[RMDB]
Description:
This 177-nucleotide RNA was probed chemically with DMS. Source: RMDB library OK2TST, as collected in RNAgym. The reactions ran in a buffer of 150 mM KOAc, 10 mM MgCl2 and 150 mM bicine (pH 8.5), at 24 C. Reactivities are given for positions 27 through 126.

RNA sequence: GGGAACGACUCGAGUAGAGUCGAAAAGUUAAAGAUUGCAGCGGGAUUCGGUUAUUAAUGGCAACCGUGCCGUUUUCUUGUGCCGCACGAAUAAUCUUGCGCUCGUUAAGCAGGUUUUGUAAGCCCAGAGCUACGCUAUAUUCGUAUAGCGUAGCUCAAAAGAAACAACAACAACAAC
Reactivity to DMS in 0.01 (KOAc 150mM, MgCl2 10mM, bicine 150mM(pH8.5), 24C), signal-to-noise 1, nucleotides 027 to 126: g000u000u000a110a100a070g000a080u000u000g000c050a100g000c020g020g050g010a120u000u000c050g010g010u000u000a050u000u000a100a070u020g010g030c100a030a080c150c180g020u000g020c000c030g010u000u000u000u000c060u000u010g020u010g020c030c070g040c010a030c050g000a070a080u000a020a030u030c040u000u010g000c080g020c040u010c070g000u030u040a070a100g040c050a060g000g000u000u000u000u000g020u000a070a080g000c000c000c000a120